[RMDB]
RNA sequence: GGGAACGACUCGAGUAGAGUCGAAAACAUGUGCGGCGGUGCGAACGGUGGAAAACGAUUCGGGCGGCGUCAGUUCGACGUCCAGACGAUCGUGGCGGCGUCCGCGCAGUUCGCGGUCGCAUUGGUACUAUCCGAGUCCUUUCGAGGACUCGGAUAGAAAAGAAACAACAACAACAAC
Reactivity to 2A3 in 0.01 (KOAc 150mM, MgCl2 10mM, bicine 150mM(pH8.5), 24C), signal-to-noise 1, nucleotides 027 to 126: c030a060u110g010u020g060c030g010g000c000g050g300u180g030c010g030a010a010c010g050g000u040g050g110a040a070a050a090c070g030a040u120u150c020g010g030g000c060g030g000c010g000u000c020a030g020u120u110c070g010a020c010g070u000c000c090a060g030a050c010g030a030u010c060g120u010g040g020c040g070g030c010g050u000c020c000g000c020g060c000a020g000u000u000c000g000c000g000g030u010c000g000c000a010u030u020g000g010u000a050
Reactivity to DMS in 0.01 (KOAc 150mM, MgCl2 10mM, bicine 150mM(pH8.5), 24C), signal-to-noise 1, nucleotides 027 to 126: c030a090u010g000u000g010c010g000g000c010g000g040u040g040c000g010a010a010c010g020g060u010g020g020a050a080a110a050c150g000a150u010u010c020g030g010g000c060g020g000c000g030u010c030a080g020u020u010c090g020a060c000g020u010c090c090a100g000a190c020g000a030u000c000g020u010g000g010c030g010g000c040g040u000c010c010g000c020g000c040a050g000u000u000c000g010c010g000g020u000c010g000c000a010u010u000g010g020u000a120